The record gives the reactivity of an RNA of 177 nucleotides to DMS and 2A3.
Reactivities are rounded to 0.1 and cut off at 0 and 3.
The RNA was probed in 150 mM KOAc, 10 mM MgCl2 and 150 mM bicine (pH 8.5) at 24 C.

RNA sequence: GGGAACGACUCGAGUAGAGUCGAAAAGAAAGCGUCAUUCGACGAAAGAGAAGCUAAUGACGCAUUAGGUUACGUGAGCAACCUAAUCAGCGCACGACAAGAAAUCUCAUUCGCAGAAAUAAGAAAAAUAGGACCAUAUGUUCGCAUAUGGUCCUAUAAAAGAAACAACAACAACAAC
Reactivity to DMS in 0.01 (KOAc 150mM, MgCl2 10mM, bicine 150mM(pH8.5), 24C), signal-to-noise 3, nucleotides 027 to 126: g000a110a080a120g020c010g010u000c030a020u000u000c000g030a160c000g020a060a050a060g000a020g000a050a050g000c040u010a100a040u030g000a020c000g000c020a030u000u000a000g000g000u000u000a060c020g000u020g000a210g010c040a000a000c010c000u000a010a000u000c110a080g000c000g030c140a120c120g000a060c150a110a050g000a030a040a080u010c030u000c030a170u000u000c010g020c130a070g030a040a030a070u080a060a070g030a010a100a020a060
Reactivity to 2A3 in 0.01 (KOAc 150mM, MgCl2 10mM, bicine 150mM(pH8.5), 24C), signal-to-noise 3, nucleotides 027 to 126: g080a000a030a000g040c000g000u010c000a010u030u010c020g110a100c050g060a230a150a000g100a010g010a090a020g030c020u020a090a020u020g010a000c000g040c000a000u020u070a000g000g000u000u070a020c020g020u080g120a060g000c010a000a040c000c020u090a080a090u070c080a030g030c010g010c000a010c020g070a070c040a050a010g090a150a100a020u010c020u000c040a080u120u050c030g010c070a000g050a060a090a070u280a140a100g090a060a040a030a000